[RMDB]
RNA sequence: GGGAACGACUCGAGUAGAGUCGAAAAGGGCGCUAGUUCGCUAGCGCCCAAACAACACUACACUCUUCAGUAGUGAUAAUAAAUAAUCAGAAGAGUACAUAAAAAGACUCUCGUUCGCGAGAGUCAACUGUAAAUACAGGUUCGCCUGUAUUUACAGAAAAGAAACAACAACAACAAC
Reactivity to DMS in 0.01 (KOAc 150mM, MgCl2 10mM, bicine 150mM(pH8.5), 24C), signal-to-noise 2, nucleotides 027 to 126: g030g010g000c020g030c000u000a000g010u000u020c190g010c000u000a020g020c030g000c000c000c000a000a020a040c050a030a230c030a020c010u000a020c010a070c020u000c020u000u000c000a060g010u000a000g000u000g000a100u000a080a090u010a040a070a090u000a080a100u000c090a040g010a020a000g000a010g030u020a080c190a090u010a030a040a090a100a100g000a040c000u000c000u000c010g010u010u010c190g010c020g010a010g010a030g010u010c000a000a030
Reactivity to 2A3 in 0.01 (KOAc 150mM, MgCl2 10mM, bicine 150mM(pH8.5), 24C), signal-to-noise 2, nucleotides 027 to 126: g000g000g000c000g000c000u000a010g030u040u040c120g010c090u000a000g030c000g000c010c000c010a000a000a000c000a000a000c000a000c000u040a010c160a020c030u000c000u000u020c010a030g010u020a010g010u020g030a010u040a050a020u070a000a090a040u160a020a050u060c040a030g020a020a010g000a020g040u090a040c030a090u300a090a170a010a010a010g010a010c000u010c040u000c000g010u020u060c300g000c000g070a010g000a010g010u000c000a000a000